Conditions: 150 mM KOAc, 10 mM MgCl2 and 150 mM bicine (pH 8.5), 24 C.
This 177-nucleotide RNA was probed chemically with 2A3 and DMS.
RNA sequence: GGGAACGACUCGAGUAGAGUCGAAAAAGAUGGAUACUGAACUUCGCUGCGAUGUAUGCGACGAUCACGCUUCCUACGACAACGUAAAAUGCCAAUCUCGCAAGCAGGAUCCAGUCAUUGUGGCGAGGCCUUAAAUUCCGUUCGCGGAAUUUAAGGCAAAAGAAACAACAACAACAAC
Reactivity to 2A3 in 0.01 (KOAc 150mM, MgCl2 10mM, bicine 150mM(pH8.5), 24C), signal-to-noise 4, nucleotides 027 to 126: a000g210a130u220g010g010a050u120a160c060u110g050a110a010c000u040u010c010g010c020u030g000c010g030a020u050g060u160a080u100g070c060g040a030c120g000a080u030c010a030c120g000c000u070u050c000c020u040a030c050g060a020c010a210a040c070g050u100a080a050a040a030u130g020c000c010a020a070u080c060u060c060g000c040a040a050g000c010a060g040g070a030u070c040c020a000g020u040c020a000u030u060g010u020g020g000c000g010a010g040
Reactivity to DMS in 0.01 (KOAc 150mM, MgCl2 10mM, bicine 150mM(pH8.5), 24C), signal-to-noise 1, nucleotides 027 to 126: a040g020a010u010g000g000a040u010a140c010u000g000a110a100c090u000u000c020g000c060u000g000c060g000a040u040g020u090a100u000g000c070g000a000c060g000a020u000c060a040c090g000c010u030u050c170c060u030a030c040g030a220c210a200a030c060g020u000a050a050a040a050u010g000c010c060a140a040u000c010u000c010g030c030a040a040g000c060a030g000g000a090u000c010c060a100g000u030c080a000u000u000g010u000g000g000c020g030a000g030
Record summary
For 2A3 the reverse transcriptase was SuperScript II with manganese.